[RMDB]
RNA sequence: GGGAACGACUCGAGUAGAGUCGAAAAGAUAUGGAUCGGUAGCAAGGCGGUGGUCGGAAACGACCAUGCGCUGAUGACCUAUUUCGAUCCUAAGUCAAAGAGAGAACACGUUCGCGUGUUCUCUCAACACUUAAGGGUAGUUCGCUACCCUUAAGUGAAAAGAAACAACAACAACAAC
Reactivity to DMS in 0.01 (KOAc 150mM, MgCl2 10mM, bicine 150mM(pH8.5), 24C), signal-to-noise 7, nucleotides 027 to 126: g010a010u000a020u000g000g010a000u000c010g000g000u000a000g010c020a050a010g020g040c010g010g020u000g000g000u000c000g010g000a010a010a030c000g010a020c010c000a000u000g010c000g050c000u000g010a060u010g010a050c300c010u000a010u000u000u010c020g010a010u000c000c000u000a010a080g000u000c000a130a140a160g000a010g000a020g000a020a010c000a010c000g010u000u010c270g030c020g020u000g000u000u000c000u000c000u000c000a030a160
Reactivity to 2A3 in 0.01 (KOAc 150mM, MgCl2 10mM, bicine 150mM(pH8.5), 24C), signal-to-noise 3, nucleotides 027 to 126: g010a010u000a010u050g000g010a000u000c010g010g000u020a000g000c010a060a040g010g000c000g000g030u000g000g000u000c000g000g000a010a010a000c010g010a010c030c030a020u190g180c000g000c000u000g000a060u020g000a000c010c000u010a020u050u210u160c020g000a010u000c010c000u000a010a010g000u010c050a030a300a010g020a000g000a010g010a010a010c000a000c010g030u150u130c300g020c010g070u000g010u000u000c000u010c000u010c000a000a000